[RMDB]
RNA sequence: GGGAACGACUCGAGUAGAGUCGAAAAGCUGUCAGUUCGCUGACAGCAAAAAAUCCUAAGUCUCUGCGCUCUGACAUGGGUGUAUCGGAAACGAUAUAACCCAACAGCAGAGCGAACUACAGAGAUAUGGAAAAAAACACGAUCUUCGGAUCGUGAACACUGGUUCAUAGUUCGCUAUGAACCAGUGAAAAGAAACAACAACAACAAC
Reactivity to DMS in 0.01 (KOAc 150mM, MgCl2 10mM, bicine 150mM(pH8.5), 24C), signal-to-noise 1, nucleotides 027 to 156: g090c000u020g010u000c020a020g030u010u010c300g060c020u000g000a010c000a000g040c010a000a000a040a110a000a070u000c000c000u000a100a300g000u000c000u000c000u010g050c000g020c040u000c010u000g010a100c050a300u010g040g000g080u000g000u000a030u000c020g020g010a110a110a300c010g000a110u010a000u010a060a050c000c000c000a000a020c030a200g030c030a000g010a060g000c000g030a050a130c000u010a210c010a000g020a000g000a070u000a160u020g000g000a020a000a030a100a060a090a200c000a000c000g000a000u000c000u000u000c300g020g010a000u000c000g000u010g000a050a100
Reactivity to 2A3 in 0.01 (KOAc 150mM, MgCl2 10mM, bicine 150mM(pH8.5), 24C), signal-to-noise 2, nucleotides 027 to 156: g000c020u000g000u000c010a000g010u030u150c260g050c130u000g000a000c000a000g030c000a000a040a000a000a010a000u050c020c000u050a090a020g020u000c010u000c000u010g020c000g020c000u000c010u010g110a280c030a120u070g000g000g000u000g000u010a010u000c010g010g040a070a060a020c000g000a000u000a000u010a120a140c000c000c040a020a010c060a030g000c000a010g000a000g000c010g000a010a010c060u180a050c020a000g010a000g000a000u010a080u080g050g050a050a050a010a000a020a010a050c000a000c010g020a000u030c010u070u140c300g160g000a000u000c000g000u000g000a050a000